This 207-nucleotide RNA was probed chemically with DMS and 2A3.
RNA sequence: GGGAACGACUCGAGUAGAGUCGAAAAGCCCAGCCCCAGCACAGCCUGCAGCCCUGGCAGAGCUCAGGCCUUGGCCUUCUGAGGUUGCCCUGAGGGCAGUGAGCAAUGAGCCCUGGGACUGGUGCACUGGGAGGGAAAGGUGAGCCAAGGCUUCCUAGUUUUAAUUAGUGUUCGCACUAAUUAAAACAAAAGAAACAACAACAACAAC
Reactivity to DMS in 0.01 (KOAc 150mM, MgCl2 10mM, bicine 150mM(pH8.5), 24C), signal-to-noise 2, nucleotides 027 to 156: g010c010c000c010a110g000c010c000c000c020a080g040c060a090c070a110g010c000c020u000g040c060a110g000c010c020c010u020g000g000c050a130g010a080g020c010u010c010a050g020g010c020c030u000u000g000g000c030c000u000u000c020u020g010a090g030g020u020u000g030c010c020c040u000g010a110g020g020g010c000a090g020u000g010a160g000c030a130a110u000g010a180g000c030c020c010u020g020g010g030a040c020u020g000g030u000g030c030a080c030u010g020g010g010a110g020g030g000a120a060a110g000g020u000g000a100g010c000c010a060a120g030g000c040u000u000c010c000u010a300
Reactivity to 2A3 in 0.01 (KOAc 150mM, MgCl2 10mM, bicine 150mM(pH8.5), 24C), signal-to-noise 4, nucleotides 027 to 156: g020c010c000c010a010g000c010c000c000c010a020g020c080a070c020a050g020c010c010u070g030c060a050g000c020c000c010u050g040g010c020a020g020a040g070c000u000c020a020g010g000c000c010u030u040g030g000c000c020u120u090c020u090g120a100g060g050u080u060g050c010c010c040u110g120a140g000g020g000c000a010g050u080g110a120g000c050a060a170u130g010a050g050c000c020c020u020g000g000g040a010c010u030g010g060u150g010c020a040c070u040g010g030g050a090g000g030g020a040a090a010g020g020u090g010a010g010c000c030a030a010g030g010c000u040u010c020c010u030a030